[RMDB]
Record summary:
Source: RMDB library TTRDES, as collected in RNAgym. Structure probing data (2A3 and DMS) for a 177-nucleotide construct. For DMS the reverse transcriptase was MarathonRT. High DMS reactivity at an A or C suggests that its Watson-Crick edge is free. The RNA was probed in 150 mM KOAc, 10 mM MgCl2 and 150 mM bicine (pH 8.5) at 24 C.
RNA sequence: GGGAACGACUCGAGUAGAGUCGAAAAGAUAUGGAUCGACCCUUCUAAGUAUUGCUGGGCUCGGAAACGAGCUGCAGUUGCAAAAAGAAGCGAUCCUAAGUCAAAACCUAUCAGUUCGCUGAUAGGAGUUCGAAAUAGACUUCGGUCUAUUUCGAACAAAAGAAACAACAACAACAAC
Reactivity to 2A3 in 0.01 (KOAc 150mM, MgCl2 10mM, bicine 150mM(pH8.5), 24C), signal-to-noise 1, nucleotides 027 to 126: g020a000u000a000u030g030g010a030u010c020g170a300c090c100c000u000u000c010u140a300a300g100u160a300u300u300g000c030u010g020g000g000c010u010c040g000g050a010a040a020c000g000a000g000c000u040g130c000a010g000u060u180g020c010a300a210a030a000a100g000a030a000g010c000g040a000u000c000c000u000a030a000g020u000c000a000a050a170a170c000c000u000a000u000c000a000g040u140u140c190g030c190u010g000a000u010a000g010g020a040
Reactivity to DMS in 0.01 (KOAc 150mM, MgCl2 10mM, bicine 150mM(pH8.5), 24C), signal-to-noise 1, nucleotides 027 to 126: g010a060u010a190u020g000g000a080u020c000g000a170c280c270c020u000u000c010u000a100a300g030u010a040u000u010g020c020u000g000g040g020c000u010c010g000g000a020a040a050c010g030a010g000c000u000g060c000a020g010u000u000g040c170a050a110a130a290a060g000a030a000g020c000g050a030u000c000c030u020a060a180g000u000c010a060a040a240a140c010c000u020a020u000c000a050g040u020u010c300g020c000u010g010a090u000a000g000g000a070